[RMDB]
RNA sequence: GGGAACGACUCGAGUAGAGUCGAAAAGGGGCUAUACUAGUUGCUCUGUGUAGGAAGGGUCUGAGGUUUCAGUAAGAUACAUUUUGCACAAACCCCACACACACCAAGUAUCCAUGAAGCCUGGUUAGUAAUGCCUAGACUUCGGUCUAGGCAUUACAAAAGAAACAACAACAACAAC
Reactivity to DMS in 0.01 (KOAc 150mM, MgCl2 10mM, bicine 150mM(pH8.5), 24C), signal-to-noise 1, nucleotides 027 to 126: g020g010g020g030c050u030a070u020a120c130u010a130g010u000u020g000c030u000c020u000g010u010g020u000a040g010g010a080a100g000g000g030u000c130u010g010a010g010g000u010u000u020c050a170g020u000a110a140g000a060u010a020c020a140u000u000u000u000g010c060a140c240a030a090a070c040c000c010c040a150c100a060c100a120c140a130c030c030a030a130g000u030a040u010c010c000a130u020g040a050a100g010c030c020u000g030g020u010u000a080
Structure probing data (DMS) for a 177-nucleotide construct.